[RMDB]
RNA sequence: GGGAACGACUCGAGUAGAGUCGAAAAGAUUUUUCAAUAUGUGAAGUAUUAUCAGAAUGCUCUGGUAUGGGGAAGAUUUUAAAUGAAGGUGCGAGGUGCGGUGCCAAACAUAUUGUCCGUGGCAUUCCCAUGCCCAGCAGUUCGCUGCUGGGCAUGGAAAAGAAACAACAACAACAAC
Reactivity to 2A3 in 0.01 (KOAc 150mM, MgCl2 10mM, bicine 150mM(pH8.5), 24C), signal-to-noise 1, nucleotides 027 to 126: g150a000u000u000u000u090u060c030a040a000u120a040u190g120u050g060a060a010g030u000a040u270u060a060u220c030a000g030a050a200u040g060c000u010c000u140g000g000u090a030u130g110g000g040g000a020a050g010a040u000u000u000u110a000a150a250u100g040a040a090g090g000u110g000c040g060a060g000g000u010g070c010g000g000u000g020c040c000a080a070a000c040a040u180a010u030u130g000u000c000c000g060u010g140g020c010a000u010u010c000
An RNA of 177 nucleotides, treated with 2A3 and read out base by base. The 2A3 profile rests on 432 reads. The RNA was probed in 150 mM KOAc, 10 mM MgCl2 and 150 mM bicine (pH 8.5) at 24 C.